[RMDB]
RNA sequence: GGGAACGACUCGAGUAGAGUCGAAAAAUUUGCUCACUAAGUUGUAUGUAUGAAUAAGUUAAACAGCAUGGAGAUUGACUUGCAACUAGGCGCAAUGUGCUGUAAUGAUGUGACCCCCCUAUUCAUCGUAUGACGGCAAAUUCGUUUGCCGUCAUACAAAAGAAACAACAACAACAAC
Reactivity to DMS in 0.01 (KOAc 150mM, MgCl2 10mM, bicine 150mM(pH8.5), 24C), signal-to-noise 1, nucleotides 027 to 126: a040u000u020u000g030c010u000c070a100c130u000a120a060g010u010u010g010u000a030u030g000u000a060u000g010a120a010u010a030a070g000u000u000a070a160a100c080a050g010c080a040u030g030g000a170g000a140u000u030g010a040c040u000u000g000c040a030a090c140u040a060g030g000c060g000c010a040a130u020g010u000g030c030u030g010u000a060a110u030g020a060u000g010u010g010a270c040c020c010c010c000c030u000a010u030u030c000a040u000c190

Source: RMDB library OK2TRN, as collected in RNAgym. Structure probing data (DMS) for a 177-nucleotide construct. The RNA was probed in 150 mM KOAc, 10 mM MgCl2 and 150 mM bicine (pH 8.5) at 24 C. DMS adducts were read by reverse transcription with MarathonRT.